[RMDB]
This 177-nucleotide RNA was probed chemically with 2A3 and DMS. The RNA was probed in 150 mM KOAc, 10 mM MgCl2 and 150 mM bicine (pH 8.5) at 24 C. The data come from the RNA Mapping Database (RMDB), library OK2TST. For 2A3, 1,478 sequencing reads were counted.

RNA sequence: GGGAACGACUCGAGUAGAGUCGAAAACAUGUGGCUGGCUGCCUGUUUUUGUAAAUAAAGUUUUACUGGCAUAUGGCCAUGCCUGUUCAUUUACAUAUUGUCCACGCCUGCUUUCUCACUAUGACAGAGCAUCAAGUACAUUCGUGUACUUGAUGCUAAAAGAAACAACAACAACAAC
Reactivity to 2A3 in 0.01 (KOAc 150mM, MgCl2 10mM, bicine 150mM(pH8.5), 24C), signal-to-noise 2, nucleotides 027 to 126: c010a040u140g030u030g120g000c010u010g030g000c020u010g010c030c000u000g130u000u150u000u100u110g040u030a030a020a060u090a110a160a140g020u050u020u060u040a020c020u010g030g000c030a040u070a110u130g080g000c000c010a000u020g020c000c000u030g060u070u070c060a080u070u050u110a060c030a040u180a020u070u220g050u020c010c000a030c020g000c000c010u010g000c000u040u060u000c000u030c000a030c070u170a090u240g090a060c020a020g100
Reactivity to DMS in 0.01 (KOAc 150mM, MgCl2 10mM, bicine 150mM(pH8.5), 24C), signal-to-noise 3, nucleotides 027 to 126: c100a110u020g040u000g000g020c020u000g010g020c040u000g010c180c010u000g000u000u000u010u000u010g000u010a020a040a020u010a100a130a130g000u000u020u010u010a120c040u010g000g030c000a060u000a100u010g000g010c060c040a070u010g020c020c020u010g000u000u000c140a090u010u000u010a070c080a070u000a070u020u020g000u000c000c030a070c130g020c010c030u000g010c040u000u000u000c020u010c020a110c180u010a070u000g010a110c180a110g000